[RMDB]
RNA sequence: GGGAACGACUCGAGUAGAGUCGAAAAGAUAUGGAUCACUAGGACAUGUAUCAUUAAGAUCCACUCGCGACUCGGAAACGAGUCUGAGUGGAUCUUAAUGAUACAACAGCCUAAUGAUCCUAAGUCAGAUCAAUUGAAUGUUCGCAUUCAAUUGAUCAAAAGAAACAACAACAACAAC
Reactivity to DMS in 0.01 (KOAc 150mM, MgCl2 10mM, bicine 150mM(pH8.5), 24C), signal-to-noise 3, nucleotides 027 to 126: g010a070u000a300u010g000g000a010u010c000a030c050u000a010g010g020a040c090a290u010g000u000a000u000c000a020u000u000a000a000g000a010u000c000c020a000c000u000c000g010c230g010a020c010u020c000g020g010a070a180a250c010g040a020g020u000c000u010g020a000g000u000g000g000a000u000c000u000u000a000a000u000g000a000u000a000c000a030a010c300a150g010c010c000u010a010a000u000g000a000u000c000c000u000a020a050g000u010c090a130